[RMDB]
RNA sequence: GGGAACGACUCGAGUAGAGUCGAAAAAUUGUCCUUAUCAAUGGGGAAGCGUUAUUACUCAAGGAACGAUAAGUGAGGGUAGUACUGCUAACACCAUUUGUGAUUUAUCACACUCCGCACCGCUGCUCAGCAACCGAAGUUUCGACUUCGGUUGCUGAAAAGAAACAACAACAACAAC
Reactivity to 2A3 in 0.01 (KOAc 150mM, MgCl2 10mM, bicine 150mM(pH8.5), 24C), signal-to-noise 1, nucleotides 027 to 126: a000u160u300g040u050c000c030u040u040a080u030c080a090a000u040g010g000g020g080a060a000g000c010g000u000u000a000u000u000a000c000u000c020a080a140g270g000a180a060c060g270a280u210a300a000g050u060g190a020g000g000g000u000a000g000u000a000c000u000g040c020u040a020a050c040a040c040c000a000u030u060u030g040u010g000a170u000u020u050a180u170c000a030c000a000c060u010c030c020g000c000a070c030c000g070c000u070g000c000u010